Description: An RNA of 177 nucleotides, treated with 2A3 and DMS and read out base by base. DMS adducts were read by reverse transcription with MarathonRT. The 2A3 profile rests on 10,329 reads.
[RMDB]
RNA sequence: GGGAACGACUCGAGUAGAGUCGAAAAGACACGACGGAGACGUCGUGUCAAGUCCAGUGCGAAAGCACUGGACAAAUAAGGGCUGUUUUACUCGCUGAUUUUCAGCCCCAAACAAAAAAUAUCAGCAAGUAUCCUAUCAUUUCGAUGAUAGGAUACUAAAAGAAACAACAACAACAAC
Reactivity to 2A3 in 0.01 (KOAc 150mM, MgCl2 10mM, bicine 150mM(pH8.5), 24C), signal-to-noise 3, nucleotides 027 to 126: g000a000c000a000c000g000a000c000g030g000a060g010a050c010g000u000c000g000u010g000u000c000a000a000g000u010c000c000a000g000u000g010c020g090a140a020a040g030c000a000c010u000g010g010a000c000a000a030a000u140a050a090g000g000g020c000u000g000u010u010u000u010a030c030u040c050g010c010u010g000a010u000u000u000u010c000a010g000c000c000c020c060a020a020a000c010a010a000a000a000a000a000u280a020u040c010a000g000c000a000
Reactivity to DMS in 0.01 (KOAc 150mM, MgCl2 10mM, bicine 150mM(pH8.5), 24C), signal-to-noise 3, nucleotides 027 to 126: g010a010c000a000c000g010a010c010g000g000a270g000a210c000g040u000c000g020u000g000u000c000a030a090g010u000c010c000a010g010u020g010c000g020a120a080a160g020c000a000c000u000g010g000a010c000a020a030a050u010a090a180g000g010g000c000u000g000u000u000u010u000a000c050u010c250g000c000u000g010a010u010u000u010u000c010a010g000c000c000c000c180a000a010a190c020a000a000a010a000a010a020u020a000u000c000a000g020c000a050